The record gives the reactivity of an RNA of 207 nucleotides to 2A3.
RNA sequence: GGGAACGACUCGAGUAGAGUCGAAAACGCACUUGGGCUCACUGAACGGAUACAUACGUCGAUGCUCAAGAUCUGUAUGUUUUGGUUGUGUUCACGGCCUUGGGAUCCACAGGCUGAGAUCUUCGAAACAUUCCGAUCACGAACCAAACGAAGCCGACAUGGACCACUGAUUCGUCAGUGGUCCAUGAAAAGAAACAACAACAACAAC
Reactivity to 2A3 in 0.01 (KOAc 150mM, MgCl2 10mM, bicine 150mM(pH8.5), 24C), signal-to-noise 2, nucleotides 027 to 156: c070g020c030a030c020u000u000g010g000g000c010u040c100a110c070u040g170a240a060c060g030g020a100u130a090c020a070u230a090c060g010u000c030g020a020u200g000c010u020c020a030a000g050a040u090c070u090g050u020a050u080g070u000u020u010u000g170g000u050u030g010u010g020u100u080c130a070c060g010g000c060c010u040u070g070g040g050a090u150c080c000a070c050a090g000g000c010u000g040a040g000a100u050c050u030u060c040g050a020a080a100c070a130u130u170c050c070g060a060u100c010a000c080g100a010a020c050c060a050a040a000c030g070a050a070g080c050c030g050a020